Overview:
The record gives the reactivity of an RNA of 177 nucleotides to 2A3 and DMS. For DMS the reverse transcriptase was MarathonRT. 2A3 adducts were read by reverse transcription with SuperScript II with manganese. The 2A3 profile rests on 5,159 reads. Reactivities are rounded to 0.1 and cut off at 0 and 3. Conditions: 150 mM KOAc, 10 mM MgCl2 and 150 mM bicine (pH 8.5), 24 C.
RNA sequence: GGGAACGACUCGAGUAGAGUCGAAAAUGAUCGAGAGAUCUAACGAUGUACGCGAGUCAACAGCACAGACUCGAGCGAAAGCUCGGUCGAAAGACCGCGUACAUCGGUCGGCAAGUGUGAAGUCAAACAUAUUACCAGCGUUCGCGCUGGUAAUAUGAAAAGAAACAACAACAACAAC
Reactivity to 2A3 in 0.01 (KOAc 150mM, MgCl2 10mM, bicine 150mM(pH8.5), 24C), signal-to-noise 3, nucleotides 027 to 126: u080g020a000u010c010g000a010g000a000g000a090u000c020u040a060a030c000g000a000u000g010u010a010c000g010c020g030a060g040u040c030a030a060c030a100g130c030a030c010a070g000a010c020u050c180g000a000g000c010g030a110a010a000g010c000u000c020g010g010u000c010g030a020a010a010g010a000c000c000g000c000g000u000a000c000a010u000c000g000g020u040c030g010g020c020a060a080g030u030g030u050g150a050a020g030u070c040a100a020a020
Reactivity to DMS in 0.01 (KOAc 150mM, MgCl2 10mM, bicine 150mM(pH8.5), 24C), signal-to-noise 6, nucleotides 027 to 126: u010g000a010u000c000g000a260g000a220g000a010u000c000u000a090a090c000g010a010u000g000u000a000c000g010c000g000a070g010u000c010a060a080c120a140g000c110a070c140a180g000a010c000u010c020g010a010g020c000g000a130a080a130g010c000u000c000g000g000u000c000g000a060a090a130g000a000c000c000g010c000g010u000a000c000a000u010c000g000g010u010c100g000g000c040a040a080g010u000g010u000g000a080a110g000u000c050a070a120a240